About this RNA:
An RNA of 207 nucleotides, treated with 2A3 and DMS and read out base by base. DMS adducts were read by reverse transcription with MarathonRT. The reactions ran in a buffer of 150 mM KOAc, 10 mM MgCl2 and 150 mM bicine (pH 8.5), at 24 C. The 2A3 profile rests on 677 reads.

RNA sequence: GGGAACGACUCGAGUAGAGUCGAAAACGGUAUUGCAGGCCGAGGUAGAAACGUUGGGAUUACAAAAUCGGUUUCGUAUUCUUAAUACUUACAUUGAAGGCAUCAAUGAUUCCAUUUUUAAAUAUGGCCAGUUGGCACGGAAUAUUGCGUCUAUCAAAUAGAAUAGACCGUUCGCGGUCUAUUCUAUAAAAGAAACAACAACAACAAC
Reactivity to 2A3 in 0.01 (KOAc 150mM, MgCl2 10mM, bicine 150mM(pH8.5), 24C), signal-to-noise 2, nucleotides 027 to 156: c020g000g020u030a030u110u110g010c050a040g010g000c020c020g000a000g030g050u120a010g100a060a070a020c040g020u060u170g070g010g000a040u080u080a080c060a010a140a000a090u090c120g010g000u000u040u130c050g000u030a080u080u070c060u070u070a080a050u090a140c020u120u010a030c010a070u040u090g020a010a030g040g000c010a020u050c000a040a000u080g030a010u120u030c010c000a040u040u100u050u060u300a100a180a150u160a090u090g030g000c010c040a080g200u260u300g040g030c050a020c070g030g000a010a010u040a030u040u100g000c020g020u000c020u060a300u050c030a020a030
Reactivity to DMS in 0.01 (KOAc 150mM, MgCl2 10mM, bicine 150mM(pH8.5), 24C), signal-to-noise 2, nucleotides 027 to 156: c070g020g030u000a060u020u000g030c020a100g040g010c060c020g010a040g000g040u000a110g010a150a100a070c030g010u000u000g020g070g010a080u000u010a160c060a050a080a150a140u000c060g020g000u000u010u000c050g060u010a070u000u000c050u000u020a040a080u000a050c020u000u000a120c030a070u010u010g020a100a110g040g000c080a200u000c040a040a080u000g010a190u000u000c000c020a080u000u010u000u020u000a040a070a120u000a060u010g010g030c060c010a100g010u010u000g030g010c080a120c090g020g000a090a070u000a040u010u000g000c020g010u010c020u020a180u000c060a090a110